[RMDB]
RNA sequence: GGGAACGACUCGAGUAGAGUCGAAAACAGGGGUCCCCCGAGCUCAUUAAGCGUGUCGGAGGGUUGUCUUCGUCAUCAACACACACAGUUUAUAAUAACUGGCAAAUCAAACAAUAAUUUCGCAGUAGCUGCCUAAUCGCACUCUGCAUCGCCUAACGCUCUUAUAAUGGUUCGCCAUUAUAAGAGCAAAAGAAACAACAACAACAAC
Reactivity to 2A3 in 0.01 (KOAc 150mM, MgCl2 10mM, bicine 150mM(pH8.5), 24C), signal-to-noise 3, nucleotides 027 to 156: c080a010g030g000g010g010u020c010c010c010c000c000g050a010g000c010u020c080a110u150u180a140a040g020c060g020u050g060u080c010g010g000a010g030g010g010u110u030g010u000c000u020u000c020g080u010c010a020u000c020a010a000c010a000c000a000c000a000c020a120g010u020u050u090a250u080a180a110u120a060a010c000u020g050g000c050a000a070a100u090c040a020a040a200c040a010a050u150a090a130u090u260u240c070g000c000a000g050u240a010g020c150u030g000c020c030u060a060a030u180c050g000c000a010c020u010c010u010g050c000a000u050c010g070c020c020u020a090a050c120
Reactivity to DMS in 0.01 (KOAc 150mM, MgCl2 10mM, bicine 150mM(pH8.5), 24C), signal-to-noise 1, nucleotides 027 to 156: c140a090g060g010g030g030u000c010c000c020c020c050g020a190g070c070u020c080a100u000u000a070a080g050c010g050u000g010u010c050g040g000a100g000g030g040u010u000g010u020c030u000u000c070g060u000c060a100u020c140a060a080c050a040c090a110c060a110c000a060g000u020u000u000a060u010a140a130u010a020a030c020u000g000g000c030a040a090a120u000c070a070a050a060c070a070a070u000a000a180u000u010u010c060g030c000a060g010u010a040g040c090u020g070c010c000u000a070a070u030c160g000c000a030c000u010c020u040g020c000a170u010c040g070c070c020u010a090a150c180